[RMDB]
RNA sequence: GGGAACGACUCGAGUAGAGUCGAAAAGAUAUGGAUGGGCCCGAUAAGCUGAUGUCGGAAACGACAUACAGCUUUUGACGGGUAGUCCUAAGUCAAAGCUCGCAUCCCGUUCGCGGGAUGCGAGCAAGGUAUAGAAUGGGUUCGCCCAUUCUAUACCAAAAGAAACAACAACAACAAC
Reactivity to 2A3 in 0.01 (KOAc 150mM, MgCl2 10mM, bicine 150mM(pH8.5), 24C), signal-to-noise 2, nucleotides 027 to 126: g010a030u040a040u080g020g020a010u020g020g300g050c010c020c000g030a160u050a150a000g020c000u010g020a010u000g010u000c010g030g000a090a040a070c020g030a010c020a000u100a190c000a010g000c020u010u030u010u030g040a020c000g010g050g020u010a020g000u030c000c000u000a100a000g040u040c050a120a100a030g020c010u020c000g030c030a020u000c000c000c060g030u090u100c300g000c010g130g000g030a000u000g010c020g000a010g000c000a000a000
Reactivity to DMS in 0.01 (KOAc 150mM, MgCl2 10mM, bicine 150mM(pH8.5), 24C), signal-to-noise 2, nucleotides 027 to 126: g010a050u000a300u000g000g000a010u000g010g020g010c000c010c000g000a090u020a030a020g010c010u010g010a040u000g000u000c010g010g000a100a070a140c020g000a020c000a010u010a090c000a000g010c000u000u000u000u000g030a170c070g000g000g000u000a280g000u000c000c000u000a060a150g010u000c000a120a090a130g000c000u000c010g000c010a010u000c000c000c010g040u000u010c250g030c050g030g000g000a000u010g010c000g000a000g020c010a000a000
The data come from the RNA Mapping Database (RMDB), library TTRDEL. Structure probing data (2A3 and DMS) for a 177-nucleotide construct. The DMS profile rests on 2,845 reads. The RNA was probed in 150 mM KOAc, 10 mM MgCl2 and 150 mM bicine (pH 8.5) at 24 C.